[RMDB]
RNA sequence: GGGAACGACUCGAGUAGAGUCGAAAAAUUGGUGAAACAGAUCGGGUACGUUUAGUAGUAGCAGUAAAUCCAUCUGUUGUUACUUCGAUAUACUUUCUCAUCGAUUUCCGAGGUAUAUCACUGUUGACCAUAGUAGUACUUUCGAGUACUACUAUGGAAAAGAAACAACAACAACAAC
Reactivity to 2A3 in 0.01 (KOAc 150mM, MgCl2 10mM, bicine 150mM(pH8.5), 24C), signal-to-noise 9, nucleotides 027 to 126: a000u130u140g030g000u020g010a020a010a010c010a010g030a020u080c110g030g020g020u050a040c040g030u080u150u110a140g040u030a040g020u040a010g060c090a020g040u110a060a140a060u030c020c010a010u000c000u000g000u010u010g030u020u030a030c000u050u100c040g020a000u010a000u010a040c010u050u140u040c060u010c030a120u070c030g130a140u060u100u000c050c020g010a020g000g000u030a030u010a010u070c040a020c090u150g100u140u130g040a060
Reactivity to DMS in 0.01 (KOAc 150mM, MgCl2 10mM, bicine 150mM(pH8.5), 24C), signal-to-noise 9, nucleotides 027 to 126: a090u010u010g010g020u000g000a040a020a030c040a050g000a030u000c170g030g010g010u000a050c080g010u010u000u000a090g010u010a110g010u000a050g020c060a130g000u000a050a080a070u010c050c040a070u000c010u000g010u000u000g010u000u010a030c070u000u010c170g000a020u000a020u000a010c010u000u000u010c090u000c080a160u000c090g010a150u000u000u000c060c020g020a060g010g010u000a010u000a020u000c020a140c230u000g000u000u000g010a270